An RNA of 177 nucleotides, treated with DMS and 2A3 and read out base by base. Source: RMDB library OK2TRN, as collected in RNAgym. The reactions ran in a buffer of 150 mM KOAc, 10 mM MgCl2 and 150 mM bicine (pH 8.5), at 24 C. For 2A3, 2,095 sequencing reads were counted. DMS adducts were read by reverse transcription with MarathonRT. High 2A3 reactivity points to a flexible backbone, as in loops and unpaired stretches.
RNA sequence: GGGAACGACUCGAGUAGAGUCGAAAAUAUGAUAAGCCUCGAUGGUUUGCCGUGCGAUGCGCGGCCAGGUAUAAUUUUCGCGCACAAGCUUGGCGCCUGAAGCCCCCAUCUGUGCUGCCUUAUCCAACCCAUACGGAGUAUUCGUACUCCGUAUGGGAAAAGAAACAACAACAACAAC
Reactivity to DMS in 0.01 (KOAc 150mM, MgCl2 10mM, bicine 150mM(pH8.5), 24C), signal-to-noise 3, nucleotides 027 to 126: u010a090u010g000a070u010a090a120g020c030c000u000c100g000a090u010g010g020u000u000u000g040c010c010g030u000g010c030g000a230u000g010c020g010c000g030g020c120c080a010g000g010u000a070u000a070a110u000u000u010u000c110g020c020g000c040a070c150a080a240g010c080u010u000g000g020c040g030c020c050u010g000a080a090g000c030c050c090c040c030a070u000c030u000g010u000g010c070u000g020c050c030u000u000a090u000c000c070a030a230
Reactivity to 2A3 in 0.01 (KOAc 150mM, MgCl2 10mM, bicine 150mM(pH8.5), 24C), signal-to-noise 2, nucleotides 027 to 126: u220a120u080g050a030u010a050a090g000c000c020u040c070g030a030u060g000g050u090u130u190g000c010c030g000u020g030c050g150a160u100g020c030g000c000g000g000c000c000a000g050g030u130a140u070a300a170u100u110u060u060c020g020c000g010c020a040c010a180a060g030c060u120u110g020g010c020g030c000c000u040g050a020a010g030c030c000c030c010c010a020u050c040u050g040u010g030c050u020g000c010c010u000u020a030u040c000c020a050a070